[RMDB]
RNA sequence: GGGAACGACUCGAGUAGAGUCGAAAAGAUAUGGACCAUGUCGAGUAUACCUACUACCCACCUCGGAAACGAGAGGUAGAUACUAAGACAGCAUGGUCCUAAGUCAAAAGCGGGGUUCGCCCCGCAAGAAUACUCUUAAGUUCGCUUAAGAGUAUUCAAAAGAAACAACAACAACAAC
Reactivity to 2A3 in 0.01 (KOAc 150mM, MgCl2 10mM, bicine 150mM(pH8.5), 24C), signal-to-noise 7, nucleotides 027 to 126: g010a010u010a010u050g000g000a000c000c000a000u000g030u060c030g010a020g040u030a060u030a300c030c040u050a070c030u160a140c050c030c040a140c080c010u000c000g010g000a010a010a000c000g000a000g000a010g020g000u000a010g010a040u060a030c030u140a230a050g040a010c010a000g000c010a010u000g000g000u000c000c000u000a000a000g010u000c010a030a030a080a140g000c010g000g010g020g020u060u110c160g170c000c000c030c000g000c000a000a000
Reactivity to DMS in 0.01 (KOAc 150mM, MgCl2 10mM, bicine 150mM(pH8.5), 24C), signal-to-noise 9, nucleotides 027 to 126: g000a010u000a050u010g000g000a020c000c000a010u000g010u000c020g000a030g020u000a070u000a050c170c030u000a140c080u010a150c090c060c070a130c200c010u000c000g010g000a020a010a030c000g010a010g010a070g000g010u000a010g000a120u000a020c030u010a240a090g010a020c300a060g000c010a000u000g000g000u000c000c000u000a000a050g000u000c010a120a050a120a120g010c000g010g000g010g020u000u000c260g000c000c000c000c000g020c000a000a010
This 177-nucleotide RNA was probed chemically with 2A3 and DMS. 2A3 adducts were read by reverse transcription with SuperScript II with manganese. For DMS the reverse transcriptase was MarathonRT. Source: RMDB library TTRDEL, as collected in RNAgym.